[RMDB]
RNA sequence: GGGAACGACUCGAGUAGAGUCGAAAAGAUAUGGACGAAGAACUACUCCCCACCUCGACUGUCGGAAACGACAGCGAGAGGUAGGGAGUCCUAAGUCAAAAGUGAAGGAGGUUCGCCUCCUUCACAACUCAUUGCCAUAGUUCGCUAUGGCAAUGAGAAAAGAAACAACAACAACAAC
Reactivity to DMS in 0.01 (KOAc 150mM, MgCl2 10mM, bicine 150mM(pH8.5), 24C), signal-to-noise 3, nucleotides 027 to 126: g010a140u000a060u000g010g010a020c020g010a220a090g020a070a080c100u000a130c020u000c010c000c010c030a010c000c000u000c000g000a160c010u010g000u010c000g010g000a090a100a180c020g020a000c000a000g000c100g000a170g010a010g010g000u000a050g010g080g010a020g000u000c150c010u000a050a230g030u010c010a090a040a070a110g010u000g000a030a010g010g030a010g000g030u000u010c290g000c000c010u010c000c000u000u000c010a000c000a050a110
Reactivity to 2A3 in 0.01 (KOAc 150mM, MgCl2 10mM, bicine 150mM(pH8.5), 24C), signal-to-noise 3, nucleotides 027 to 126: g140a110u260a130u300g140g020a000c050g030a020a070g020a100a070c080u090a030c000u180c010c010c000c000a000c000c000u030c010g120a210c000u000g000u000c000g010g020a080a060a030c000g020a010c010a000g020c100g060a130g000a000g000g000u000a020g010g000g010a010g020u000c000c000u040a060a010g030u030c030a050a040a010a060g000u000g000a000a000g000g010a010g030g000u090u160c250g080c050c000u000c000c010u020u000c000a000c010a000a000